[RMDB]
RNA sequence: GGGAACGACUCGAGUAGAGUCGAAAACUUUCCAUGCUCCGUAGGACUAACUCUUGCUCUCACGGGCUGUAUCUGAUCGAAGUGACCACGGACACUGGACAGCUUGAGGUCAAUGUAUGAAGCGGCACGCUUCCCGGACAUUCGUGUCCGGGAAGCGAAAAGAAACAACAACAACAAC
Reactivity to 2A3 in 0.01 (KOAc 150mM, MgCl2 10mM, bicine 150mM(pH8.5), 24C), signal-to-noise 2, nucleotides 027 to 126: c000u120u030u000c000c010a050u070g040c020u040c050c010g020u070a110g060g040a040c060u090a050a070c000u050c020u070u070g010c000u000c000u000c050a020c060g010g000g000c020u000g050u020a090u010c040u020g100a110u100c070g030a150a040g020u020g080a040c010c020a030c080g000g010a040c010a020c020u050g020g030a020c020a030g000c020u030u030g030a000g070g000u020c000a060a050u080g020u120a070u150g030a060a000g020c000g030g000c070a040
Reactivity to DMS in 0.01 (KOAc 150mM, MgCl2 10mM, bicine 150mM(pH8.5), 24C), signal-to-noise 2, nucleotides 027 to 126: c250u000u000u000c000c010a100u100g000c000u000c000c000g020u010a140g060g010a220c130u040a050a050c030u000c060u020u000g100c020u020c040u030c030a100c280g000g030g000c010u010g020u030a040u000c000u000g040a190u080c050g000a100a100g000u010g000a150c010c020a170c100g040g010a200c060a030c180u000g000g000a030c190a000g000c030u010u080g000a050g000g000u000c010a030a050u000g010u000a080u000g000a110a080g030c040g000g000c210a250